[RMDB]
An RNA of 177 nucleotides, treated with 2A3 and DMS and read out base by base.
The reactions ran in a buffer of 150 mM KOAc, 10 mM MgCl2 and 150 mM bicine (pH 8.5), at 24 C.
For 2A3 the reverse transcriptase was SuperScript II with manganese.
DMS (dimethyl sulfate) methylates the pairing face of unpaired adenines and cytosines.

RNA sequence: GGGAACGACUCGAGUAGAGUCGAAAAUUCGAGGAUCUCCUCCCUCUCCUUCGAGGACGGGUUCGCGACGGGUUGGCUCAUCCUGAGAUCGGGGAGCCUCGACGAUCUCUUUGAUCUCCUGAAGGAGGAGCAAGACAUAGUUCGCUAUGUCUUGCUCAAAAGAAACAACAACAACAAC
Reactivity to 2A3 in 0.01 (KOAc 150mM, MgCl2 10mM, bicine 150mM(pH8.5), 24C), signal-to-noise 1, nucleotides 027 to 126: u040u010c000g000a000g000g000a100u030c030u020c010c000u010c010c010c000u040c010u000c010c000u040u040c050g080a030g000g020a010c000g000g020g000u100u230c030g020c030g110a190c140g100g160g000u120u090g030g000c010u000c020a040u020c010c000u050g020a030g000a050u070c030g000g020g000g000a000g010c000c010u030c010g000a010c020g010a020u010c070u000c000u080u100u160g020a030u020c010u010c020c040u020g050a050a030g020g000a000g020
Reactivity to DMS in 0.01 (KOAc 150mM, MgCl2 10mM, bicine 150mM(pH8.5), 24C), signal-to-noise 1, nucleotides 027 to 126: u000u000c050g030a040g030g000a170u010c090u000c050c010u010c020c020c050u000c010u000c010c130u000u020c080g000a050g030g010a010c130g010g000g010u000u000c040g040c040g010a110c150g010g000g010u000u000g010g010c000u000c020a090u000c010c020u000g000a050g000a040u000c120g010g000g030g000a030g000c040c030u000c050g010a110c220g010a080u000c000u000c110u000u010u000g000a040u000c030u000c000c110u000g000a040a070g020g000a010g040